Conditions: 150 mM KOAc, 10 mM MgCl2 and 150 mM bicine (pH 8.5), 24 C. The record gives the reactivity of an RNA of 207 nucleotides to DMS and 2A3. The data come from the RNA Mapping Database (RMDB), library RNAMAK. 2A3 adducts were read by reverse transcription with SuperScript II with manganese.
[RMDB]
RNA sequence: GGGAACGACUCGAGUAGAGUCGAAAAGUGCACUUCGGUGCACCGGCUAGGGGUCAUACAACAGCGUCAACCAACAGCUAUACUGAAGCCUCCACGGUAUAGACAUGGACGACGACAUGUAUGACGGAGGCACCCGGGACAAUCUGUUCGCAGAUAAGUACCACCUACUAUUCGUAGUAGGUGGUACAAAAGAAACAACAACAACAAC
Reactivity to DMS in 0.01 (KOAc 150mM, MgCl2 10mM, bicine 150mM(pH8.5), 24C), signal-to-noise 1, nucleotides 027 to 156: g040u020g000c040a020c010u000u000c300g020g010u000g000c000a000c010c020g000g010c130u010a040g020g040g020g000u010c000a050u010a030c100a100a140c100a150g010c080g010u000c010a130a210c100c100a040a070c030a160g010c030u000a010u000a010c040u000g010a100a060g000c050c040u000c000c030a300c050g010g010u000a000u000a000g010a050c040a160u010g010g000a300c180g010a020c000g030a030c090a160u000g000u000a030u000g010a070c000g020g020a060g010g090c010a130c070c000c000g000g000g000a150c060a080a160u000c030u000g010u010u000c130g060c030a010g000a040u010a050a300
Reactivity to 2A3 in 0.01 (KOAc 150mM, MgCl2 10mM, bicine 150mM(pH8.5), 24C), signal-to-noise 6, nucleotides 027 to 156: g010u000g010c000a000c010u050u140c300g070g000u000g010c000a000c000c010g040g010c050u150a130g040g060g110g010u010c010a000u000a020c040a140a050c060a200g150c030g010u020c050a180a160c100c070a010a010c010a010g000c000u000a000u000a000c000u010g080a140a050g020c000c020u000c020c010a010c010g000g010u000a000u000a010g100a090c070a200u030g030g010a050c260g010a010c010g050a050c100a050u090g000u000a000u010g000a010c030g000g010a000g000g000c010a020c010c010c010g040g020g050a080c090a070a100u080c020u080g070u090u100c170g020c160a010g040a060u180a150a080

Overview:
Values cover nucleotides 27 to 156. The 2A3 profile rests on 4,751 reads.